[RMDB]
RNA sequence: GGGAACGACUCGAGUAGAGUCGAAAAAAUCGGCACCACUAACGUAAACUAUUUCACAACCCUCGAAGGUGACGUCUGCCAUGAAAUCAACGGCUUUGAUCAGCAUACAAUUAACGUACAAACAACUAAACCAGUUCUCGAUCCAACAAAAGUCAUGAAUGCACGUCGUAUUCGUACGACGUGCAUUAAAAGAAACAACAACAACAAC
Reactivity to 2A3 in 0.01 (KOAc 150mM, MgCl2 10mM, bicine 150mM(pH8.5), 24C), signal-to-noise 2, nucleotides 027 to 156: a000a020u050c010g010g030c020a000c020c000a030c130u060a060a020c190g150u170a080a170a080c090u120a210u080u110u070c080a070c030a050a290c000c000c080u070c050g060a170a000g020g000u030g010a000c000g020u000c000u010g000c040c030a090u240g070a000a130a020u150c040a100a000c200g120g010c020u030u000u040g120a070u050c030a010g020c000a010u060a100c030a090a050u130u060a060a000c040g070u090a000c020a000a070a000c010a000a030c070u200a010a000a000c050c000a080g000u040u000c010u040c040g060a060u020c010c000a010a010c020a030a080a010a040g100u150c010a080u180g070
Chemical mapping of a 207-nucleotide RNA with 2A3. For 2A3 the reverse transcriptase was SuperScript II with manganese. Source: RMDB library OK3TST, as collected in RNAgym.